RNA sequence: GGGAACGACUCGAGUAGAGUCGAAAAACAGUUCCAGGCUCACCGUUAGAAAUCCUGUCUUUCGGAGUUCGAGCGGUUAAAUAAAAGAGAGACUAAGCAUGUAGCGCCUUGAGCGUAGGUUUUUCGGACGCGGGUUCAAGUCCCGCCGCCUCCACCAGAACGGACUAUAGUUCGCUAUAGUCCGUUCAAAAGAAACAACAACAACAAC
Reactivity to 2A3 in 0.01 (KOAc 150mM, MgCl2 10mM, bicine 150mM(pH8.5), 24C), signal-to-noise 1, nucleotides 027 to 156: a020c010a020g020u020u000c000c000a020g020g040c020u070c020a020c000c000g020u020u010a020g000a000a300a010u030c020c020u040g000u120c010u050u030u050c020g010g010a050g020u120u090c020g000a000g000c040g000g000u090u110a020a200a110u230a050a010a040a020g050a000g000a010g010a000c020u090a190a000g080c070a080u210g130u230a010g080c020g000c010c000u060u090g030a040g020c000g050u030a090g130g000u000u050u020u030u070c050g000g040a020c020g030c010g030g000g020u130u130c020a040a030g070u050c000c000c000g000c000c020g010c010c050u040c030c000a110c020c040a020